[RMDB]
RNA sequence: GGGAACGACUCGAGUAGAGUCGAAAACUGCUCGCUUGCAAUUGGAAUCAGAUAAUUACAACAAAUUGCGAGAUCCUUACUUUUUCAAAUCAGGUCAUGAUGAUGGGAGCCGAGGGGCGAUUGAUUCAUAUGAUGAGCGGUUCGCCGCUCAUCAUAUAAAAGAAACAACAACAACAAC
Reactivity to 2A3 in 0.01 (KOAc 150mM, MgCl2 10mM, bicine 150mM(pH8.5), 24C), signal-to-noise 3, nucleotides 027 to 126: c070u040g010c000u010c000g050c020u040u010g000c000a020a050u060u060g020g040a090a080u060c030a090g020a100u170a230a140u230u090a130c070a100a010c000a110a160a070u030u040g010c000g000a030g000a020u040c000c000u130u140a120c080u070u180u070u080u120c040a110a150a130u040c010a010g050g090u100c120a180u100g070a010u020g050a070u070g030g030g010a010g030c060c020g040a060g070g010g000g000c030g070a070u020u140g050a040u010u100c050
Reactivity to DMS in 0.01 (KOAc 150mM, MgCl2 10mM, bicine 150mM(pH8.5), 24C), signal-to-noise 1, nucleotides 027 to 126: c080u050g000c060u000c050g010c000u020u020g000c020a090a080u000u000g000g020a050a080u030c190a080g000a160u050a120a010u010u000a000c190a070a090c000a010a100a050u000u020g000c000g020a080g010a060u000c030c000u010u050a060c030u040u000u020u020u000c050a040a210a070u020c080a080g010g010u020c100a010u030g020a020u000g020a060u030g000g000g010a010g000c060c080g000a130g000g010g000g020c000g000a190u040u000g030a090u010u030c080